[RMDB]
RNA sequence: GGGAACGACUCGAGUAGAGUCGAAAAUACGUAUGUUCUUCAUAGAGAUAAAUUAUUAUGCCUUACGCCUGGUUGACCAGACUUUAGAGGUCGCUGUUCUGAGCUUAACGUCUGUUUUAACUGAAACUUGUUCAUUGUUCUUCGGAACAAUGAACAAAAAAGAAACAACAACAACAAC
Reactivity to 2A3 in 0.01 (KOAc 150mM, MgCl2 10mM, bicine 150mM(pH8.5), 24C), signal-to-noise 2, nucleotides 027 to 126: u160a000c040g060u100a140u180g150u020u000c040u150u130c010a070u160a120g110a020g060a000u160a160a060a000u120u120a080u180u090a050u200g030c000c060u100u010a030c030g080c000c010u060g060g000u000u040g080a040c000c030a000g000a000c000u010u060u050a040g000a010g210g010u010c020g010c020u030g080u020u100c000u060g020a000g040c000u000u040a030a000c020g000u030c000u000g050u050u010u000u020a020a070c050u020g120a020a000a000c030
Reactivity to DMS in 0.01 (KOAc 150mM, MgCl2 10mM, bicine 150mM(pH8.5), 24C), signal-to-noise 3, nucleotides 027 to 126: u040a070c140g000u020a000u010g000u040u000c040u000u000c100a110u020a030g010a120g010a090u040a070a030a090u020u020a080u010u010a030u000g000c040c010u000u000a070c140g020c020c020u000g010g030u000u000g010a110c180c010a060g000a060c080u010u020u000a170g000a090g010g010u000c010g000c050u010g000u000u010c020u000g000a070g000c040u010u000a080a050c120g010u020c050u000g000u000u010u020u000a060a100c090u010g020a140a060a060c150

Chemical mapping of a 177-nucleotide RNA with 2A3 and DMS. Source: RMDB libraries RFM100 and RFMREP, as collected in RNAgym. DMS adducts were read by reverse transcription with MarathonRT. 2A3 adducts were read by reverse transcription with SuperScript II with manganese. Values are in units of 0.01, from 0 to 300, in steps of 10.